Background
Chemical mapping of a 207-nucleotide RNA with 2A3.
[RMDB]
RNA sequence: GGGAACGACUCGAGUAGAGUCGAAAACGACUGGCCCCACUUCGGUGGGGCCACGGUACUUAGAAGUGAACACUAAGUGUCGUGAACACCAUUUGGUUAACUGCUCAAACUAAAUGGUGAUGAGGGAAGGAAUGACCCUCAUCGGACUACGCGAUCCGUGGGAAUACAUCUUCGGAUGUAUUCCCACAAAAGAAACAACAACAACAAC
Reactivity to 2A3 in 0.01 (KOAc 150mM, MgCl2 10mM, bicine 150mM(pH8.5), 24C), signal-to-noise 3, nucleotides 027 to 156: c020g040a010c040u080g030g000c010c010c010c000a010c020u040u060c190g020g000u010g020g020g000g000c000c000a000c000g000g010u010a000c000u040u020a010g040a200a080g250u170g240a060a040c050a000c030u010a030a020g020u020g000u040c020g020u040g070a030a010c000a000c040c000a000u010u000u000g040g000u050u060a130a060c060u160g060c050u120c090a090a010a030c000u000a010a010a010u000g000g000u030g000a000u020g000a000g030g000g060a000a080g120g110a190a050u120g160a180c000c000c010u000c000a000u030c000g000g030a020c080u150a080c160g060c040g140a110u040c050c030
Source: RMDB library PDB130, as collected in RNAgym.
2A3 adducts were read by reverse transcription with SuperScript II with manganese.
Conditions: 150 mM KOAc, 10 mM MgCl2 and 150 mM bicine (pH 8.5), 24 C.